[RMDB]
RNA sequence: GGGAACGACUCGAGUAGAGUCGAAAAGUGAUGGACGCGCUGUCGUCGCAAGCCAACGUGUCUGGGUAUAAGGCUGUGCUGCUCGCGGCCUCGGAAUCGACCCGGUUCUUUCCGAUGCUGACGACGGACAUCAAGCCGCAUUCGUGCGGCUUGAUGUAAAAGAAACAACAACAACAAC
Reactivity to DMS in 0.01 (KOAc 150mM, MgCl2 10mM, bicine 150mM(pH8.5), 24C), signal-to-noise 1, nucleotides 027 to 126: g000u020g010a040u000g020g000a050c110g020c120g000c070u000g010u040c000g000u020c080g030c020a130a210g000c000c030a040a060c180g050u010g000u000c050u030g050g000g010u000a100u020a100a130g060g000c000u000g030u030g000c120u000g030c130u000c040g030c030g010g000c000c060u020c040g000g000a100a020u000c200g000a120c000c060c010g000g000u030u000c010u000u000u000c000c000g040a000u000g000c000u010g040a170c000g000a020c060g060g000
Reactivity to 2A3 in 0.01 (KOAc 150mM, MgCl2 10mM, bicine 150mM(pH8.5), 24C), signal-to-noise 1, nucleotides 027 to 126: g040u110g070a100u070g010g070a000c000g040c000g050c050u070g040u110c000g020u030c070g000c000a010a010g110c040c030a010a000c040g140u050g050u000c030u060g040g010g000u070a080u070a260a080g080g040c060u000g050u070g000c000u080g000c040u070c020g010c000g000g000c000c000u000c000g000g000a030a000u030c120g050a060c030c030c000g020g130u160u000c000u000u020u000c000c000g020a010u080g000c050u010g000a060c010g000a010c020g010g010